[RMDB]
RNA sequence: GGGAACGACUCGAGUAGAGUCGAAAACAAACAACAACAACAACAACCAUUAUCAUUAGCCCACCCACCCUAUAUAUCUAUAUGUCCCUAAUGAUAAUGCCCAUAUAGAUAUACAACAACAACAAAAGGGUAUUAGAUAGUUCGCUAUCUAAUACCCAAAAGAAACAACAACAACAAC
Reactivity to DMS in 0.01 (KOAc 150mM, MgCl2 10mM, bicine 150mM(pH8.5), 24C), signal-to-noise 2, nucleotides 027 to 126: c080a100a070a110c250a000a040c190a070a100c290a300a050c090a000a090c010a060a130c010c070a000u000u040a100u000c080a040u010u000a100g000c080c110c000a040c000c010c000a030c020c010c090u040a020u040a000u000a000u000c000u000a000u000a000u000g000u000c050c060c000u000a190a020u010g020a020u000a010a010u000g020c030c050c040a000u000a000u000a000g000a000u000a040u030a000c210a050a050c230a030a030c250a020a020c200a080a090a060a030
Reactivity to 2A3 in 0.01 (KOAc 150mM, MgCl2 10mM, bicine 150mM(pH8.5), 24C), signal-to-noise 2, nucleotides 027 to 126: c050a040a110a040c020a060a010c020a010a020c000a000a000c000a070a080c010a090a020c060c000a050u100u090a000u110c060a050u030u160a060g050c000c010c010a050c000c000c000a010c010c000c030u000a000u020a000u000a000u030c000u040a040u000a000u030g000u000c040c000c000u060a030a090u060g050a000u020a080a030u060g120c010c010c010a000u040a000u000a000g010a000u040a000u050a050c000a130a000c000a060a000c000a020a010c000a010a000a150a020

An RNA of 177 nucleotides, treated with DMS and 2A3 and read out base by base. Conditions: 150 mM KOAc, 10 mM MgCl2 and 150 mM bicine (pH 8.5), 24 C. It was measured as part of the RMDB library OK1LIB. DMS adducts were read by reverse transcription with MarathonRT. For DMS, 1,290 sequencing reads were counted.